[RMDB]
Conditions: 150 mM KOAc, 10 mM MgCl2 and 150 mM bicine (pH 8.5), 24 C. This 177-nucleotide RNA was probed chemically with DMS. Values cover nucleotides 27 to 126.
RNA sequence: GGGAACGACUCGAGUAGAGUCGAAAAGAUAUGGAACUAGAUAUCCAGCAAGUGAUCUACAUUGGAGUAUUCGGAAACGAAUACGAAGAUGUAGAUCAUGAUGACCUGGAUAUCUAGUUCCUAAGUCCUAUGGUUUCUUGUUCGCAAGAAACCAUAGAAAAGAAACAACAACAACAAC
Reactivity to DMS in 0.01 (KOAc 150mM, MgCl2 10mM, bicine 150mM(pH8.5), 24C), signal-to-noise 4, nucleotides 027 to 126: g010a130u010a300u000g000g010a020a000c000u000a010g010a010u010a000u000c010c000a000g010c060a070a140g030u000g010a000u010c010u000a010c000a010u000u000g010g020a300g010u000a010u000u000c000g000g010a170a140a260c000g010a020a000u000a000c000g000a300a210g010a010u000g000u000a010g010a000u000c000a000u000g010a040u020g010a070c300c000u010g000g000a000u000a000u000c000u000a010g000u000u010c000c000u000a020a080g020u000c010